[RMDB]
RNA sequence: GGGAACGACUCGAGUAGAGUCGAAAAAGUGAGUAUGGCUCGUUACGACGAGCCAUACUCACAACGGUUUUCCUAAAUCGUCGUGAGACGGACCUUGGAAAACCUAGUAUUUCAAUAACUAGGUCAAAUUAGCCUAGAUCCUUCGGGAUCUAGGCAAGAUAUGUGCGUUCUUCGGAACGCACAUAUCAAAAGAAACAACAACAACAAC
Reactivity to 2A3 in 0.01 (KOAc 150mM, MgCl2 10mM, bicine 150mM(pH8.5), 24C), signal-to-noise 2, nucleotides 027 to 156: a000g000u000g000a000g000u000a000u010g010g000c000u040c030g030u010u060a090c300g020a000c000g010a110g000c000c000a000u000a000c000u000c000a000c000a000a000c000g000g000u000u000u000u000c000c000u000a000a000a000u060c010g000u000c010g000u050g160a130g000a010c000g000g000a000c000c020u010u020g010g000a000a000a000a000c000c000u000a010g030u030a020u000u110u100c050a090a050u110a140a090c080u040a020g020g000u000c010a040a090a140u190u150a070g010c000c000u000a010g000a000u000c000c010u020u120c180g120g000g000a020u020c010u000a000g000g000c000a000a000
Structure probing data (2A3) for a 207-nucleotide construct.
The reactions ran in a buffer of 150 mM KOAc, 10 mM MgCl2 and 150 mM bicine (pH 8.5), at 24 C.